About this RNA:
The record gives the reactivity of an RNA of 177 nucleotides to DMS. Conditions: 150 mM KOAc, 10 mM MgCl2 and 150 mM bicine (pH 8.5), 24 C. The DMS profile rests on 3,587 reads. For DMS the reverse transcriptase was MarathonRT. Source: RMDB library TTRINS, as collected in RNAgym.

[RMDB]
RNA sequence: GGGAACGACUCGAGUAGAGUCGAAAAGAUAUGGAAAGGCCUGACCUGCGUGUUGGGACGACAUGCUGACUAUCGGAAACGAUAGUAGCAACAGCGUUUAACACGCAGGUCAGGCCUUUCCUAAGUCCAUUGAAGCAAAGUUCGCUUUGCUUCAAUGAAAAGAAACAACAACAACAAC
Reactivity to DMS in 0.01 (KOAc 150mM, MgCl2 10mM, bicine 150mM(pH8.5), 24C), signal-to-noise 2, nucleotides 027 to 126: g000a110u000a300u000g000g000a010a010a030g000g040c000c000u000g000a020c000c000u000g020c030g020u000g000u010u000g070g040g000a010c020g000a090c150a230u000g020c000u010g010a030c000u000a000u000c000g010g000a170a130a280c010g000a020u000a000g010u000a020g000c010a020a070c250a170g010c010g000u000u010u010a020a010c000a010c010g010c000a000g000g010u000c000a000g000g000c000c010u000u000u000c000c010u000a020a070g000u010c030